[RMDB]
RNA sequence: GGGAACGACUCGAGUAGAGUCGAAAACCACAAACCACAUAAAGCGCGACCUUCAACGACGAAGGCUGCACUUCCCGAUAGAACGGGACCUGGACAAAGGCGUCCUCGCUAGGUGACUAGCGGGACGGCCCUCUGCCCAGUUCGCUGGGCAGAGGGCAAAAGAAACAACAACAACAAC
Reactivity to 2A3 in 0.01 (KOAc 150mM, MgCl2 10mM, bicine 150mM(pH8.5), 24C), signal-to-noise 1, nucleotides 027 to 126: c040c010a020c060a050a040a080c090c020a040c000a230u210a150a250a000g060c030g010c000g030a100c010c030u030u010c030a100a100c100g260a030c180g010a020a010g000g000c020u000g000c000a000c010u060u040c000c000c000g090a030u050a160g180a190a060c010g000g000g000a000c000c050u080g050g000a020c050a070a170a030g050g030c020g000u000c000c030u060c070g000c010u000a010g010g000u080g100a060c000u020a000g000c000g000g010g000a000c010g050